RNA sequence: GGGAACGACUCGAGUAGAGUCGAAAACGGGGCAGAUGGUGUCGAGCAUCUUCAUGGCCCUCCAGAUGCUCCGGAGGAUCUUUGCCGGCAUGGCGAGGCUGAUAUCGCCUGGGGUACACGUGGGGAGUCCCCACUACUUGUUCGCAAGUAGUGGGGAAAAAGAAACAACAACAACAAC
Reactivity to 2A3 in 0.01 (KOAc 150mM, MgCl2 10mM, bicine 150mM(pH8.5), 24C), signal-to-noise 2, nucleotides 027 to 126: c000g000g000g030g010c030a010g010a070u010g000g000u040g110u210c090g030a050g020c020a060u060c140u230u070c090a190u250g090g020c000c000c000u030c000c000a010g010a030u050g010c010u010c010c030g000g030a030g030g000a020u060c010u130u120u230g030c040c010g060g080c110a090u140g020g000c000g010a000g010g000c110u160g160a160u020a000u170c040g010c030c010u040g000g010g000g020u060a060c060a020c080g010u090g010g000g000g000a030g040
Reactivity to DMS in 0.01 (KOAc 150mM, MgCl2 10mM, bicine 150mM(pH8.5), 24C), signal-to-noise 4, nucleotides 027 to 126: c050g000g000g010g000c020a010g010a160u000g010g010u000g010u020c140g000a140g020c020a050u000c190u020u010c260a090u000g010g010c010c010c000u000c040c030a020g000a180u000g010c010u000c010c030g000g000a100g010g000a080u010c060u010u000u010g010c040c020g000g000c130a060u010g010g010c030g010a040g000g020c040u000g010a090u010a100u000c060g010c010c000u000g000g000g000g000u010a090c130a050c140g010u000g000g000g000g010a180g000

Description:
The data come from the RNA Mapping Database (RMDB), library OK2TST. An RNA of 177 nucleotides, treated with 2A3 and DMS and read out base by base. For 2A3, 2,058 sequencing reads were counted. For DMS, 4,466 sequencing reads were counted. For 2A3 the reverse transcriptase was SuperScript II with manganese.